[RMDB]
RNA sequence: GGGAACGACUCGAGUAGAGUCGAAAACGAUGGGCUGAAUGUAAUUACUAGUGAUAUUGACAUUGCCUAGUUGCAACGAAGCACCGUAGUUAUCACCACCGAUAUUCGCGCCUUUCCAAACACAUUGCAUAGCAACAACAUUCGUGUUGUUGCUAUGAAAAGAAACAACAACAACAAC
Reactivity to DMS in 0.01 (KOAc 150mM, MgCl2 10mM, bicine 150mM(pH8.5), 24C), signal-to-noise 9, nucleotides 027 to 126: c100g010a080u010g000g000g020c070u000g020a110a060u000g000u000a060a060u000u000a060c080u000a070g010u010g010a080u010a090u010u000g010a120c230a110u000u000g010c050c030u000a130g010u000u000g020c090a050a060c070g010a140a140g000c030a060c060c070g000u000a070g010u000u000a050u000c050a060c040c040a040c090c050g000a080u000a070u000u000c030g010c090g000c030c030u000u000u000c020c020a070a080a070c200a050c220a120u010u010g010
Reactivity to 2A3 in 0.01 (KOAc 150mM, MgCl2 10mM, bicine 150mM(pH8.5), 24C), signal-to-noise 6, nucleotides 027 to 126: c040g050a070u100g000g030g010c040u040g070a100a030u070g050u080a050a090u130u080a040c040u030a040g050u010g130a060u040a080u130u170g050a030c040a060u020u060g020c000c010u020a040g020u070u120g020c040a080a090c060g040a060a000g000c020a030c090c020g010u020a020g010u010u030a030u040c020a020c050c000a010c000c040g050a050u030a060u120u060c020g010c000g000c060c000u030u050u010c040c000a060a100a020c090a030c040a150u060u250g030
The record gives the reactivity of an RNA of 177 nucleotides to DMS and 2A3. For 2A3 the reverse transcriptase was SuperScript II with manganese. The RNA was probed in 150 mM KOAc, 10 mM MgCl2 and 150 mM bicine (pH 8.5) at 24 C.